[RMDB]
RNA sequence: GGGAACGACUCGAGUAGAGUCGAAAAGAAAACGAAAGGAAAAACCAAGAAAGAAACUGAAAACACACGCAAAUAAACCAAAGGCAAGGUGUAAGCCAUAAAGCGUGUGAAAACUAAGGAGGAAAAAGGUACGCUAAAUAUUCGUAUUUAGCGUACCAAAAGAAACAACAACAACAAC
Reactivity to 2A3 in 0.01 (KOAc 150mM, MgCl2 10mM, bicine 150mM(pH8.5), 24C), signal-to-noise 2, nucleotides 027 to 126: g000a000a040a000a010c070g070a060a090a050g140g040a090a010a000a020a060c020c000a050a040g080a050a220a000g050a020a080a000c010u030g030a000a000a130a000c000a000c000a000c010g030c000a030a190a040u110a080a120a020c160c090a080a000a080g050g000c020a000a000g010g030u080g140u300a090a020g000c020c000a050u210a010a020a010g000c000g000u010g000u000g000a000a040a000a000c010u080a050a100g030g010a010g000g130a020a000a000a000a170
Reactivity to DMS in 0.01 (KOAc 150mM, MgCl2 10mM, bicine 150mM(pH8.5), 24C), signal-to-noise 3, nucleotides 027 to 126: g030a070a130a040a120c050g000a090a070a130g000g000a080a020a040a140a100c020c050a050a100g000a160a040a050g000a060a050a080c120u000g010a050a100a090a130c010a030c000a000c000g000c040a030a100a110u000a070a080a120c080c130a040a060a070g010g030c010a070a070g000g000u000g010u020a060a140g020c030c020a130u020a050a090a070g000c010g010u010g000u010g000a010a010a050a100c090u000a010a040g000g000a170g000g000a060a070a070a100a070